RNA sequence: GGGAACGACUCGAGUAGAGUCGAAAAGAUAUGGAUGUUUCUUUCGAGCAUGCAAACUCGGAAACGAGGACGUAUAUGCUAAGACAGAAGAGAACAUCCUAAGUCAAAAGGUACCUUCGGGUACCAACGGUCUAACUAACUUCGGUUAGUUAGACCGAAAAGAAACAACAACAACAAC
Reactivity to DMS in 0.01 (KOAc 150mM, MgCl2 10mM, bicine 150mM(pH8.5), 24C), signal-to-noise 2, nucleotides 027 to 126: g000a010u000a300u000g000g060a000u000g000u000u000u000c000u010u000u000c070g010a100g000c000a040u000g020c060a070a270a230c010u000c000g000g000a070a090a160c000g040a010g020g010a100c300g000u010a080u040a060u000g030c000u010a120a140g020a100c300a050g030a040a020g000a050g000a050a020c000a010u000c000c010u010a010a100g000u000c030a060a050a030a150g000g000u000a000c000c000u010u010c200g050g040g000u000a000c000c000a020a050
Reactivity to 2A3 in 0.01 (KOAc 150mM, MgCl2 10mM, bicine 150mM(pH8.5), 24C), signal-to-noise 2, nucleotides 027 to 126: g030a040u050a000u150g010g000a010u010g020u020u110u060c010u020u090u080c060g050a020g000c000a020u030g000c020a140a040a210c010u010c010g020g020a010a050a040c010g000a000g030g030a020c120g060u050a170u020a010u300g000c030u080a050a040g120a110c100a070g060a060a010g080a100g010a000a000c000a010u000c010c000u030a070a010g040u000c020a040a020a010a240g000g000u000a010c010c000u020u100c300g150g000g000u000a000c010c010a000a000